Source: RMDB library OK2TRN, as collected in RNAgym. Structure probing data (2A3 and DMS) for a 177-nucleotide construct. As a SHAPE reagent, 2A3 marks flexible, mostly unpaired nucleotides at the ribose 2'-OH. The reactions ran in a buffer of 150 mM KOAc, 10 mM MgCl2 and 150 mM bicine (pH 8.5), at 24 C. DMS adducts were read by reverse transcription with MarathonRT. For 2A3, 1,384 sequencing reads were counted.
[RMDB]
RNA sequence: GGGAACGACUCGAGUAGAGUCGAAAACAUCAAGCCUGUGCUCCACGUGAACAAGGUCGACAGAGCUCUUCUCGAGUUGCAGAUGGACGGAGAGGAUAUGUACCAGACCUUCUCUCGUGCGAUCGAGUAUCAUACGGUCCUUCGGGACCGUAUGAUAAAAAGAAACAACAACAACAAC
Reactivity to 2A3 in 0.01 (KOAc 150mM, MgCl2 10mM, bicine 150mM(pH8.5), 24C), signal-to-noise 2, nucleotides 027 to 126: c040a090u110c090a050a040g030c000c000u230g070u050g170c010u000c010c030a300c230g170u300g070a030a020c020a050a080g020g030u120c040g050a000c040a110g050a030g060c000u000c000u070u000c000u000c010g040a000g030u000u010g070c020a010g030a160u120g010g140a010c030g020g030a010g000a000g000g030a020u040a060u230g130u100a240c030c030a040g030a130c050c000u160u070c010u000c000u050c030g030u040g030c040g050a050u020c020g010a020g000
Reactivity to DMS in 0.01 (KOAc 150mM, MgCl2 10mM, bicine 150mM(pH8.5), 24C), signal-to-noise 2, nucleotides 027 to 126: c150a070u010c100a150a140g000c020c020u000g000u010g020c020u020c010c050a130c290g040u000g020a020a020c060a100a050g000g000u020c100g000a090c190a080g020a180g000c040u000c000u000u000c000u000c010g010a030g000u000u000g020c070a100g000a070u000g010g000a040c020g000g000a040g000a010g010g010a030u010a060u000g010u030a130c180c090a130g000a120c050c010u000u000c000u000c000u000c000g020u000g000c040g010a020u010c040g020a130g000